RNA sequence: GGGAACGACUCGAGUAGAGUCGAAAAAAGUUGAUAUGGAUUUACUCCGAGGAUACGAACUACCACGAACAGGGGAAACUCUACCCGUGGCGUCUCCGUUUGACGAGUAAGUCCUAAGUCAACAAAAUCUAAUAUCAGUGUUCGCACUGAUAUUAGAAAAAGAAACAACAACAACAAC
Reactivity to DMS in 0.01 (KOAc 150mM, MgCl2 10mM, bicine 150mM(pH8.5), 24C), signal-to-noise 2, nucleotides 027 to 126: a090a060g020u000u000g000a030u010a050u010g000g020a010u000u000u000a020c010u010c000c000g000a050g020g010a020u000a010c010g000a060a020c070u000a300c000c000a010c000g000a020a120c140a190g030g000g000g010a020a000a060c000u000c000u000a110c300c250c020g010u000g000g000c010g010u000c060u000c000c000g000u000u000u010g010a200c300g000a010g000u010a000a030g010u000c000c000u010a020a030g000u010c010a000a000c010a100a010a080a020
Notes
Conditions: 150 mM KOAc, 10 mM MgCl2 and 150 mM bicine (pH 8.5), 24 C. An RNA of 177 nucleotides, treated with DMS and read out base by base. For DMS, 1,391 sequencing reads were counted.